Structure probing data (DMS and 2A3) for a 177-nucleotide construct. High 2A3 reactivity points to a flexible backbone, as in loops and unpaired stretches. For DMS, 2,426 sequencing reads were counted. For DMS the reverse transcriptase was MarathonRT.
RNA sequence: GGGAACGACUCGAGUAGAGUCGAAAAGAUAUGGAUAGUGGACAUGAACCCAGAUCGGAAACGAUCUGUGUUCAACAGCCACGUCCUAAGUCAAAUCAAAUUCCUGGCUUCGGCCAGGAAUUUGAAACAUUACUGUCAGCUUCGGCUGACAGUAAUGAAAAGAAACAACAACAACAAC
Reactivity to DMS in 0.01 (KOAc 150mM, MgCl2 10mM, bicine 150mM(pH8.5), 24C), signal-to-noise 3, nucleotides 027 to 126: g010a020u000a300u000g010g010a020u000a070g060u000g010g010a050c070a260u000g000a010a000c000c030c010a020g010a010u000c000g000g000a120a060a150c000g000a000u000c000u010g000u010g000u000u000c010a030a080c230a200g000c000c000a000c000g000u000c000c000u000a030a110g000u010c000a120a070a210u010c000a010a010a000u000u000c000c000u000g000g030c000u000u000c270g020g010c000c000a000g000g010a010a000u000u000u010g000a030a160a220
Reactivity to 2A3 in 0.01 (KOAc 150mM, MgCl2 10mM, bicine 150mM(pH8.5), 24C), signal-to-noise 1, nucleotides 027 to 126: g020a020u070a030u080g000g010a020u160a300g020u020g010g020a060c110a170u080g020a010a000c010c070c000a000g000a010u000c010g020g060a050a050a050c020g000a000u000c010u010g010u010g000u000u030c000a010a000c050a000g060c000c000a000c010g000u000c000c010u030a090a020g060u030c050a000a020a270u060c000a000a020a010u000u010c000c000u000g010g020c000u050u070c240g210g000c020c000a040g010g010a010a010u000u000u000g000a000a000a000

The data come from the RNA Mapping Database (RMDB), library TTRDEL.